[RMDB]
RNA sequence: GGGAACGACUCGAGUAGAGUCGAAAAUCGCCGUAUGUGGUCGGCGCGUUGAAGCUAGGCCUCACCGCUCCGUUCAACAUCGACGAGGUGCCAAACGUUAUCCGCGGCGACUACGUCAACGUGUCCGGAGCCGGAUUUGCUUCGGCAAAUCCGGCUCAAAAGAAACAACAACAACAAC
Reactivity to 2A3 in 0.01 (KOAc 150mM, MgCl2 10mM, bicine 150mM(pH8.5), 24C), signal-to-noise 1, nucleotides 027 to 126: u160c090g010c000c000g090u300a060u070g170u050g000g000u050c000g020g040c000g000c000g070u060u210g090a070a000g000c100u260a200g120g000c000c040u040c010a060c060c000g100c000u140c080c010g130u160u050c030a130a100c030a100u170c100g050a030c020g000a040g000g040u080g020c000c000a000a120a080c030g010u150u140a150u040c000c000g010c070g020g000c000g000a050c000u020a000c000g030u020c020a060a050c020g030u010g060u020c000c000g030